Chemical mapping of a 177-nucleotide RNA with 2A3 and DMS. Reactivities are given for positions 27 through 126.
RNA sequence: GGGAACGACUCGAGUAGAGUCGAAAAGUUUUAGGGAGGGAGAGCGGCCUGGGUCCUGGGUGUUGUGUGCGGAGCUGUGGCGUCGCGUGUGAGGCGCGUGCAGGGUGAGUGUGAGUGGACGCGUGAGGAUGACUUAGACUUUCGAGUCUAAGUCAUCAAAAGAAACAACAACAACAAC
Reactivity to 2A3 in 0.01 (KOAc 150mM, MgCl2 10mM, bicine 150mM(pH8.5), 24C), signal-to-noise 4, nucleotides 027 to 126: g050u050u040u070u130a070g010g030g020a120g040g020g000a070g010a010g020c040g020g040c010c020u040g010g010g020u070c050c060u050g010g010g010u050g010u030u120g030u020g030u010g030c030g030g000a020g010c010u010g030u050g080g000c000g030u070c020g010c030g020u140g060u050g060a070g020g020c010g000c010g000u030g010c020a020g000g000g080u070g020a080g010u070g020u030g010a050g030u040g020g010a020c000g000c030g070u040g050a080g100
Reactivity to DMS in 0.01 (KOAc 150mM, MgCl2 10mM, bicine 150mM(pH8.5), 24C), signal-to-noise 3, nucleotides 027 to 126: g010u000u010u010u030a100g000g000g000a070g020g010g000a070g000a070g000c040g000g010c030c020u010g000g020g010u000c070c060u020g000g010g010u000g010u000u020g020u000g000u010g000c080g000g000a110g020c040u000g020u030g000g020c020g010u010c020g010c050g010u010g010u020g000a130g000g010c030g010c050g010u010g000c050a080g000g000g020u020g010a080g010u010g010u010g000a070g020u000g000g000a070c050g030c080g020u010g000a110g020
DMS adducts were read by reverse transcription with MarathonRT.